[RMDB]
RNA sequence: GGGAACGACUCGAGUAGAGUCGAAAAUACUUAGUACGCGCGUAGUUGCAGGCAUUCCGGGUGCAGCAAAUGACGCGGAAGACUUUUCCCAGAGUGUGCGCUUCAACUGGCGUGCUGAGUAGUGCACGAAUUGCACGUACGUUCGCGUACGUGCAAAGAUGACCAGAUAAUUCGUUAUCUGGUCAUCAAAAGAAACAACAACAACAAC
Reactivity to 2A3 in 0.01 (KOAc 150mM, MgCl2 10mM, bicine 150mM(pH8.5), 24C), signal-to-noise 5, nucleotides 027 to 156: u060a000c000u010u000a000g020u020a020c000g010c010g010c040g110u090a020g010u040u010g000c050a070g020g020c010a030u070u040c060c090g060g070g020u040g080c050a050g030c020a050a080a210u150g030a040c070g000c020g070g030a020a020g110a090c030u080u150u060u070c020c010c020a010g010a000g020u090g000u020g020c080g000c070u010u040c030a170a130c050u030g020g000c000g000u000g000c000u010g000a010g000u040a020g030u030g020c050a020c070g080a090a110u070u000g010c000a000c000g000u000a000c010g020u010u050c180g000c010g090u000a000c000g000u000g000c000a000a010a000
Reactivity to DMS in 0.01 (KOAc 150mM, MgCl2 10mM, bicine 150mM(pH8.5), 24C), signal-to-noise 2, nucleotides 027 to 156: u000a060c010u000u030a070g020u000a070c030g030c020g040c060g020u000a060g000u010u000g010c050a130g020g020c020a090u010u000c000c180g000g050g110u000g010c020a300g010c010a050a100a110u000g020a110c070g000c040g010g000a180a140g000a130c110u010u010u000u010c020c020c000a210g030a120g020u000g040u020g010c050g030c020u000u000c030a080a080c060u020g040g000c040g020u020g000c000u000g010a050g010u000a070g040u000g010c040a100c080g010a100a240u000u000g030c030a030c000g040u000a010c000g000u000u000c300g040c020g030u000a000c000g020u010g000c020a000a010a050
Source information: An RNA of 207 nucleotides, treated with 2A3 and DMS and read out base by base. The DMS profile rests on 5,028 reads. Source: RMDB library M2RFOK, as collected in RNAgym. DMS adducts were read by reverse transcription with MarathonRT. 2A3 adducts were read by reverse transcription with SuperScript II with manganese. For 2A3, 4,895 sequencing reads were counted. The RNA was probed in 150 mM KOAc, 10 mM MgCl2 and 150 mM bicine (pH 8.5) at 24 C.